[RMDB]
RNA sequence: GGGAACGACUCGAGUAGAGUCGAAAAGAGCAACUAAGGAUUUUAGGCUCCCCGGUGCGUCUCGAACCGCGCCGGGCCAAACCCACAGGGGCUGGCGGUCCUGUGCGGUCAAAAUCUUUCCGCUGGAAUACCUAUCCCAGUUUCGACUGGGAUAGAAGGUUAAAUACAGCUUCGGCUGUAUUUAACCAAAAGAAACAACAACAACAAC
Reactivity to 2A3 in 0.01 (KOAc 150mM, MgCl2 10mM, bicine 150mM(pH8.5), 24C), signal-to-noise 1, nucleotides 027 to 156: g010a020g030c010a050a200c040u100a030a120g110g060a260u190u090u080u200a100g100g000c000u030c000c000c010c000g020g000u010g000c000g040u070c100u120c240g030a070a060c030c000g040c020g000c000c000g020g000g000c000c000a010a040a000c000c000c000a000c020a010g000g000g000g000c000u000g000g000c000g000g000u040c000c000u010g000u010g020c300g000g000u070c050a050a120a010a010u060c000u140u200u050c020c010g000c020u020g000g030a120a080u140a180c020c000u000a000u020c000c000c000a000g000u040u070u100c120g080a020c010u000g000g000g060a000u000a000g000a010a010

Chemical mapping of a 207-nucleotide RNA with 2A3. It was measured as part of the RMDB library M2RFPK.